[RMDB]
RNA sequence: GGGAACGACUCGAGUAGAGUCGAAAAGACGCUGAUGCGAUCGACUGUAAGAUAGAUAAAAUGAGGAGACAGAUACGUACGGCAAGUAUCGUCGCCAGAAUUACAGUCGCAAAUUGCCGUACGAAGAGCAGCACGAGGAUUUCGAUCCUCGUGCUGCAAAAGAAACAACAACAACAAC
Reactivity to 2A3 in 0.01 (KOAc 150mM, MgCl2 10mM, bicine 150mM(pH8.5), 24C), signal-to-noise 1, nucleotides 027 to 126: g220a000c000g090c140u240g000a140u150g100c210g070a130u000c000g000a010c000u000g000u000a000a000g060a150u080a040g100a160u140a140a090a040a140u300g000a180g020g000a000g000a000c030a130g030a000u050a060c040g030u000a000c000g010g040c000a020a020g010u000a000u080c060g000u030c000g000c070c000a060g100a000a000u080u000a000c000a000g000u000c000g000c020a090a130a000u000u000g000c000c000g010u000a000c070g140a010a010g000a000